[RMDB]
RNA sequence: GGGAACGACUCGAGUAGAGUCGAAAAGCCAGAGGGAGACCCCAGAGGGGGCUGAGGCCAAGCCCUGGUAUGAGCCCAUCUAUCUGGGAGGGGUCUUCCAGCUGGAGAAGGGUGACCGACUCAGCGCAUCGAACAGGUAGUUCGCUACCUGUUCGAUAAAAGAAACAACAACAACAAC
Reactivity to DMS in 0.01 (KOAc 150mM, MgCl2 10mM, bicine 150mM(pH8.5), 24C), signal-to-noise 1, nucleotides 027 to 126: g020c030c020a050g000a190g000g000g000a060g030a030c020c010c010c000a120g030a120g010g000g000g000g010c000u010g010a120g000g030c020c020a100a170g000c170c100c070u000g000g000u000a060u000g000a070g000c010c010c000a090u000c070u020a070u010c050u000g010g000g030a120g020g000g000g010u000c000u000u000c010c000a060g000c010u030g010g000a040g000a030a240g000g010g010u020g000a120c050c000g020a300c050u000c010a060g000c050g000c140
Structure probing data (DMS) for a 177-nucleotide construct. The RNA was probed in 150 mM KOAc, 10 mM MgCl2 and 150 mM bicine (pH 8.5) at 24 C. For DMS the reverse transcriptase was MarathonRT. Source: RMDB library OK2TRN, as collected in RNAgym. For DMS, 937 sequencing reads were counted.